Chemical mapping of a 207-nucleotide RNA with 2A3 and DMS. It was measured as part of the RMDB library RNAMAK. The RNA was probed in 150 mM KOAc, 10 mM MgCl2 and 150 mM bicine (pH 8.5) at 24 C. 2A3 is a SHAPE reagent: it acylates the 2'-hydroxyl of flexible nucleotides of all four kinds. Values are in units of 0.01, from 0 to 300, in steps of 10.
RNA sequence: GGGAACGACUCGAGUAGAGUCGAAAACGCUGGGUCUGAUGGUGUCACAGCCCAUUGUCAGGCUUACCUGAAGCGCGCACGGGUACUGGCCUUGGAUUUAUGGGUCACAGCACCAUCAGACCUGUGCUGAAGCGCGCACGGCAACCGAAAGGUGCGAUCCAUUGUACUGGUUCGCCAGUACAAUGGAAAAAGAAACAACAACAACAAC
Reactivity to 2A3 in 0.01 (KOAc 150mM, MgCl2 10mM, bicine 150mM(pH8.5), 24C), signal-to-noise 4, nucleotides 027 to 156: c060g000c010u050g010g010g000u010c010u000g000a000u010g000g030u010g120u130c100a050c080a160g030c010c000c030a080u050u090g030u020c030a010g010g020c020u080u140a060c000c000u030g050a190a080g040c020g000c020g000c040a030c020g010g000g000u050a100c100u170g070g000c010c010u050u120g100g010a040u060u240u170a120u170g010g010g020u130c060a060c020a140g010c000a000c000c000a000u000c000a000g000a000c000c000u000g000u010g000c030u040g000a090a020g020c030g000c000g010c010a000c030g030g000c030a070a070c010c010g070a100a010a010g050g010u030g000c010g030a040
Reactivity to DMS in 0.01 (KOAc 150mM, MgCl2 10mM, bicine 150mM(pH8.5), 24C), signal-to-noise 1, nucleotides 027 to 156: c050g030c090u020g000g010g010u020c000u010g010a000u010g010g010u010g000u000c070a160c120a210g000c010c000c000a060u000u000g020u000c020a000g000g060c000u010u000a050c000c000u000g000a060a060g000c010g000c000g080c000a300c000g040g020g040u000a030c300u000g010g050c000c000u020u010g050g020a070u010u030u000a040u020g010g010g010u000c070a090c110a160g000c020a020c000c010a020u000c000a020g000a010c010c000u000g020u000g000c000u000g050a100a120g010c040g030c020g000c030a290c050g000g010c040a080a170c000c010g000a050a110a220g020g010u000g010c070g000a180
2A3 adducts were read by reverse transcription with SuperScript II with manganese.